[RMDB]
RNA sequence: GGGAACGACUCGAGUAGAGUCGAAAAGGGGUCCCUCACGGUAAAUACACUACCCACCGCUUGAACUACAGGCUGAAGCCUCCACGGCCUGCAAGCGAGGUGUAUUUAAAUGUGAGGGACGGAGGCACCCAAACAACUCCGGUUCGCCGGAGUUGAACACUCUACACAUGUUCGCAUGUGUAGAGUGAAAAGAAACAACAACAACAAC
Reactivity to DMS in 0.01 (KOAc 150mM, MgCl2 10mM, bicine 150mM(pH8.5), 24C), signal-to-noise 1, nucleotides 027 to 156: g010g050g070g010u000c000c000c000u010c000a010c030g040g000u000a010a040a030u010a000c010a010c030u000a030c060c000c070a300c050c010g000c010u020u000g020a120a250c170u020a300c020a040g020g000c000u020g000a010a130g000c050c010u020c000c020a300c090g010g000c030c000u000g010c000a020a030g020c030g010a030g020g000u000g020u000a000u000u000u000a020a100a050u010g040u000g020a050g000g000g000a000c000g050g000a000g060g010c020a120c010c010c000a090a090a100c010a010a020c000u000c010c000g040g010u000u010c300g020c000c020g070g000a020g010u000u000g000a060a220
Reactivity to 2A3 in 0.01 (KOAc 150mM, MgCl2 10mM, bicine 150mM(pH8.5), 24C), signal-to-noise 3, nucleotides 027 to 156: g170g000g060g020u000c000c010c000u000c000a010c010g070g120u230a020a010a000u010a000c000a000c000u070a090c040c140c050a060c020c030g000c010u040u020g040a170a100c140u140a060c240a010g010g000c000u010g000a070a010g020c000c000u000c000c000a000c000g000g000c000c000u000g000c010a000a000g000c000g000a000g010g000u000g000u010a000u000u040u080a020a030a010u030g010u000g000a000g020g000g000a000c000g000g000a000g000g000c000a020c000c000c000a000a060a010c000a000a000c000u010c000c000g020g090u090u090c260g070c110c000g000g010a000g000u000u000g000a000a010

Conditions: 150 mM KOAc, 10 mM MgCl2 and 150 mM bicine (pH 8.5), 24 C. Chemical mapping of a 207-nucleotide RNA with DMS and 2A3. DMS adducts were read by reverse transcription with MarathonRT. The DMS profile rests on 1,814 reads.